This 207-nucleotide RNA was probed chemically with 2A3. Source: RMDB library ARCHII, as collected in RNAgym. Values cover nucleotides 27 to 156. The RNA was probed in 150 mM KOAc, 10 mM MgCl2 and 150 mM bicine (pH 8.5) at 24 C.
RNA sequence: GGGAACGACUCGAGUAGAGUCGAAAAUCGCGACAGUACCAAAUUGUGGGGCCUGCACCCGCAGCCAGGGCUCUCCUGGUUCAACGACUACAUGGUACGCGGCCGGAGCGUGAGCGUUCCGGUGAAAAUAUAGUCUCUCCUCGGGGACGCGCCCCCGCUUUGAACAUAACUUCGGUUAUGUUCAAAGAAAAGAAACAACAACAACAAC
Reactivity to 2A3 in 0.01 (KOAc 150mM, MgCl2 10mM, bicine 150mM(pH8.5), 24C), signal-to-noise 4, nucleotides 027 to 156: u080c020g010c030g070a060c060a100g020u020a020c010c010a020a050a220u130u070g000u020g040g010g030g080c080c110u190g040c190a130c050c000c000g000c030a000g010c010c020a010g030g040g040c160u110c070u130c190c010u000g000g000u040u090c040a080a060c050g090a010c040u110a030c070a130u090g010g000u010a020c020g000c000g010g000c000c000g000g000a000g000c020g020u120g080a080g210c020g010u000u010c000c000g000g000u010g010a020a010a020a000u140a010u050a040g010u000c000u000c000u030c020c010u010c010g000g010g030g080a150c010g050c010g020c020c000c000c000c000g030